[RMDB]
RNA sequence: GGGAACGACUCGAGUAGAGUCGAAAAGCGUGAGGGAUGGCGGCUAUAGGGUUACAUCAAUCUAUCAGUAGUGAUAUAUCGCGAGUAUCAUUAGUUAUAGAAGAAGGGCAGGCCAACUACGUGCCAGAAUAUUUUAUGUAUUCGUACAUAAAAUAUUAAAAGAAACAACAACAACAAC
Reactivity to DMS in 0.01 (KOAc 150mM, MgCl2 10mM, bicine 150mM(pH8.5), 24C), signal-to-noise 9, nucleotides 027 to 126: g010c060g010u010g010a080g000g000g000a090u010g000g010c060g010g010c050u000a070u030a090g010g010g010u010u020a100c120a090u030c100a120a110u000c010u000a010u000c080a050g000u000a020g020u000g000a010u000a010u000a080u010c100g000c110g010a070g010u000a000u000c010a010u000u000a020g000u010u000a030u010a020g010a040a100g010a090a090g010g000g010c070a080g000g000c010c020a060a110c090u010a060c100g010u010g010c030c030a120g000
Reactivity to 2A3 in 0.01 (KOAc 150mM, MgCl2 10mM, bicine 150mM(pH8.5), 24C), signal-to-noise 9, nucleotides 027 to 126: g050c050g040u110g080a060g020g040g020a090u060g030g030c030g010g010c020u050a060u150a140g090g020g030u090u100a050c020a070u070c040a050a100u010c000u010a010u000c000a020g040u010a000g010u000g010a000u000a000u010a020u050c070g020c070g120a030g030u000a000u000c000a000u000u010a030g250u010u020a020u000a020g030a070a010g060a020a040g030g020g000c030a030g040g020c010c000a030a010c010u070a030c050g020u040g030c010c000a030g060
This 177-nucleotide RNA was probed chemically with DMS and 2A3.
Source: RMDB library OK1LIB, as collected in RNAgym.
Values cover nucleotides 27 to 126.
For 2A3, 31,179 sequencing reads were counted.